Description
Structure probing data (DMS and 2A3) for a 177-nucleotide construct. For DMS, 4,337 sequencing reads were counted. The RNA was probed in 150 mM KOAc, 10 mM MgCl2 and 150 mM bicine (pH 8.5) at 24 C. DMS adducts were read by reverse transcription with MarathonRT. Values cover nucleotides 27 to 126. 2A3 adducts were read by reverse transcription with SuperScript II with manganese.
[RMDB]
RNA sequence: GGGAACGACUCGAGUAGAGUCGAAAAUAGAAGUCGCGAUAAAUGGGCGCCGGCGGAGCGGUGGGAGAUCCGAGCGGCGGCGGCAAGCUGGCUGCGAGCGGCUGAGCAGCACUCCAAGCUCGAACAAAGUUAGGAGAUUAUUCGUAAUCUCCUAACUAAAAGAAACAACAACAACAAC
Reactivity to DMS in 0.01 (KOAc 150mM, MgCl2 10mM, bicine 150mM(pH8.5), 24C), signal-to-noise 4, nucleotides 027 to 126: u000a120g010a110a140g010u010c030g020c030g010a110u010a050a090a120u000g010g000g010c050g030c050c050g000g010c020g000g020a110g020c050g000g010u000g000g010g010a130g000a130u010c040c030g010a070g010c030g000g010c060g000g000c070g000g000c030a060a080g000c020u000g000g000c020u000g010c040g010a080g010c050g010g010c030u010g000a080g020c040a060g000c050a150c050u000c020c040a100a160g000c030u000c020g000a080a130c220a060a090
Reactivity to 2A3 in 0.01 (KOAc 150mM, MgCl2 10mM, bicine 150mM(pH8.5), 24C), signal-to-noise 3, nucleotides 027 to 126: u170a030g130a120a010g040u030c020g020c020g050a080u100a180a220a050u190g030g050g030c020g000c020c020g060g010c030g040g010a090g050c030g000g040u070g010g020g010a110g000a020u060c030c000g010a040g040c000g070g000c040g000g000c000g000g020c020a010a010g000c010u040g060g000c000u040g020c040g000a030g020c010g020g000c020u000g000a010g000c010a000g020c010a050c050u010c000c010a040a030g010c010u030c020g030a060a020c040a070a140